RNA sequence: GGGAACGACUCGAGUAGAGUCGAAAAGUCGGCGUCGUGACGGUCCAGCCGCAAUCGGUGCCGGUCGUCACCGAACUGCCGGGCCGCACCAGUGCCUUCCUGGUCGCCCAGGUGCGGGCACGGGUCGGUACAUGCUAUAAUUCGUUAUAGCAUGUACAAAAGAAACAACAACAACAAC
Reactivity to DMS in 0.01 (KOAc 150mM, MgCl2 10mM, bicine 150mM(pH8.5), 24C), signal-to-noise 9, nucleotides 027 to 126: g010u010c010g010g010c010g020u000c030g010u010g010a020c000g010g000u010c010c040a300g010c010c020g010c300a170a140u030c060g010g010u010g010c200c180g000g000u000c010g000u000c000a010c110c080g010a050a040c050u030g020c000c000g010g000g000c020c010g010c130a040c000c000a070g010u000g000c000c000u000u020c010c000u000g000g010u020c250g010c280c000c000a010g000g010u010g010c200g000g000g000c010a010c000g000g000g000u000c050g010
Reactivity to 2A3 in 0.01 (KOAc 150mM, MgCl2 10mM, bicine 150mM(pH8.5), 24C), signal-to-noise 9, nucleotides 027 to 126: g080u040c000g000g010c000g010u020c000g000u010g010a020c000g000g020u060c010c010a020g010c000c010g110c190a060a150u300c050g020g010u050g050c070c030g020g010u010c010g000u000c000a020c040c060g020a120a060c050u150g000c000c000g000g010g000c010c010g010c020a020c000c000a020g000u000g000c000c000u030u050c010c010u020g020g020u240c100g120c070c010c000a010g020g010u080g120c130g010g000g000c000a000c010g010g000g000u030c030g010